[RMDB]
RNA sequence: GGGAACGACUCGAGUAGAGUCGAAAACUGCCAAGUGAGCCAGGUGGAGGGCUUGGCCCAUCCUAGCUCUGGGACCUCUGCAUGCCCUUGGCCCUGGGAGCCUCAGUGUCCUCGUCUGCAGAAUGGACAUAGGGCAACAUUUCGAUGUUGCCCUAUGAAAAGAAACAACAACAACAAC
Reactivity to DMS in 0.01 (KOAc 150mM, MgCl2 10mM, bicine 150mM(pH8.5), 24C), signal-to-noise 4, nucleotides 027 to 126: c090u000g010c030c040a120a070g020u000g010a090g030c030c100a050g010g030u000g000g010a070g010g000g000c030u010u000g020g000c020c020c020a060u010c030c030u010a090g020c030u000c030u010g010g000g000a090c070c030u000c030u000g000c050a070u010g000c020c030c010u000u000g020g010c020c060c020u000g010g000g000a100g000c060c020u000c060a070g020u000g000u000c010c030u000c070g010u000c030u000g000c050a090g010a100a090u010g000g000a250
This 177-nucleotide RNA was probed chemically with DMS. The reactions ran in a buffer of 150 mM KOAc, 10 mM MgCl2 and 150 mM bicine (pH 8.5), at 24 C. In probing experiments dimethyl sulfate is read out at A N1 and C N3, which are open when not base-paired.